[RMDB]
RNA sequence: GGGAACGACUCGAGUAGAGUCGAAAAACGAGGAGUUAAGAGUUCAUUCGGCUGUCCAGAUGUAUCCAAGUACCCUGUGUUAUUUGGCAAUAAAUACAUCUGGGCAACUGACUGAACUUUUCACUUUUCAUAAAAGCCGUACGGUUCGCCGUACGGCGGUCUUUACAGUGUUCGCACUGUAAAGACCAAAAGAAACAACAACAACAAC
Reactivity to 2A3 in 0.01 (KOAc 150mM, MgCl2 10mM, bicine 150mM(pH8.5), 24C), signal-to-noise 4, nucleotides 027 to 156: a000c090g010a000g020g000a010g000u000u010a000a000g000a000g000u000u000c000a010u010u000c000g010g020c000u000g010u000c000c000a000g000a010u000g010u000a010u040c000c010a000a000g010u010a020c030c060c200u270g080u080g040u240u070a020u010u010u010g010g000c050a120a140u080a240a140a000u010a080c000a000u000c000u000g010g000g000c010a000a000c000u010g000a000c000u000g000a000a000c000u000u000u000u000c000a000c000u010u000u010u000c020a030u130a090a160a030a030g000c000c000g000u000a000c000g000g060u010u070c190g050c090c000g010u000a000c000g000g000c000

The record gives the reactivity of an RNA of 207 nucleotides to 2A3. For 2A3 the reverse transcriptase was SuperScript II with manganese. Conditions: 150 mM KOAc, 10 mM MgCl2 and 150 mM bicine (pH 8.5), 24 C. Values cover nucleotides 27 to 156. The 2A3 profile rests on 4,558 reads. Reactivities are rounded to 0.1 and cut off at 0 and 3.